[RMDB]
RNA sequence: GGGAACGACUCGAGUAGAGUCGAAAAGAAAGUGAUCGUGGGCUGCCUGUGCCCUGGUCAUUGAUAGUGCAGGGAAAGAAAUCGCGGAAAGUGCUUCCCCGUGUUUGGAGGGUCCGCUCCUGUCCCUCUCUAGAUAUUGGUUCGCCAAUAUCUAGAGAAAAGAAACAACAACAACAAC
Reactivity to 2A3 in 0.01 (KOAc 150mM, MgCl2 10mM, bicine 150mM(pH8.5), 24C), signal-to-noise 4, nucleotides 027 to 126: g050a040a110a010g020u020g010a030u030c070g190u130g000g010g020c020u090g130c050c090u140g100u140g060c000c020c000u000g010g000u000c010a010u000u070g070a090u100a050g060u070g060c030a020g000g010g060a040a140a050g070a030a210a070u130c070g000c020g010g080a080a050a020g170u130g090c030u040u060c010c000c000c020g090u110g090u090u180u170g060g000a050g010g020g020u040c010c010g000c010u050c000c010u020g030u050c000c000c000u000
Reactivity to DMS in 0.01 (KOAc 150mM, MgCl2 10mM, bicine 150mM(pH8.5), 24C), signal-to-noise 3, nucleotides 027 to 126: g010a130a120a060g010u000g000a000u000c010g000u000g030g020g030c010u000g020c150c130u000g000u010g010c010c000c010u010g000g010u000c000a010u010u000g020a130u000a090g020u000g010c030a050g000g010g010a070a060a090g010a050a080a100u010c140g010c030g000g020a050a090a100g000u000g010c070u000u000c030c010c020c110g010u000g000u010u000u010g030g000a060g010g010g010u000c020c030g010c010u000c010c020u000g000u000c010c000c010u010
An RNA of 177 nucleotides, treated with 2A3 and DMS and read out base by base. For 2A3 the reverse transcriptase was SuperScript II with manganese. The DMS profile rests on 3,346 reads. For DMS the reverse transcriptase was MarathonRT. Source: RMDB library RFMREP, as collected in RNAgym. Conditions: 150 mM KOAc, 10 mM MgCl2 and 150 mM bicine (pH 8.5), 24 C.